[RMDB]
RNA sequence: GGGAACGACUCGAGUAGAGUCGAAAACACAGGUGUAGGCCACCAUGGCAGGCUAAUUUUUGUAUUUUUUUGUAGAGAUGGGGUUUCACCGUAUUACCUAGGCUGGUCUCGAACUCAUGGGUUCAAGCAAUCCUCCUGCCUUGGCCUCUCAAAGUGAGAUAGGAGGAUUAUUCGUAAUCCUCCUAUCAAAAGAAACAACAACAACAAC
Reactivity to DMS in 0.01 (KOAc 150mM, MgCl2 10mM, bicine 150mM(pH8.5), 24C), signal-to-noise 2, nucleotides 027 to 156: c040a070c060a100g000g000u010g020u020a110g020g000c010c020a060c140c060a050u000g020g040c020a070g010g020c120u000a040a050u000u010u000u010u000g020u010a020u000u000u000u000u000u000u000g020u000a100g020a090g000a060u000g030g040g020g020u000u000u000c030a070c030c040g000u000a050u000u000a050c050c070u000a060g040g020c000u000g040g030u000c010u000c050g020a060a060c020u000c060a090u010g030g020g000u000u000c020a060a070g000c080a060a040u000c010c020u000c000c000u010g010c010c030u000u000g020g020c020c010u000c040u020c020a040a040a080g020u010g000a200
Reactivity to 2A3 in 0.01 (KOAc 150mM, MgCl2 10mM, bicine 150mM(pH8.5), 24C), signal-to-noise 2, nucleotides 027 to 156: c090a010c040a040g040g040u030g050u140a000g030g030c000c020a040c080c060a050u070g010g000c000a000g000g000c070u090a060a040u050u130u030u110u100g070u030a180u080u140u030u030u020u070u030g120u060a020g000a030g000a050u100g000g030g010g040u050u100u120c020a000c000c030g060u030a110u080u170a030c010c000u020a030g040g050c060u080g010g020u020c030u030c030g040a070a040c000u030c070a040u070g080g010g000u020u040c070a020a080g030c010a060a060u040c000c000u000c020c000u000g000c010c010u010u020g000g010c000c000u000c000u000c030a080a160a030g050u040g020a050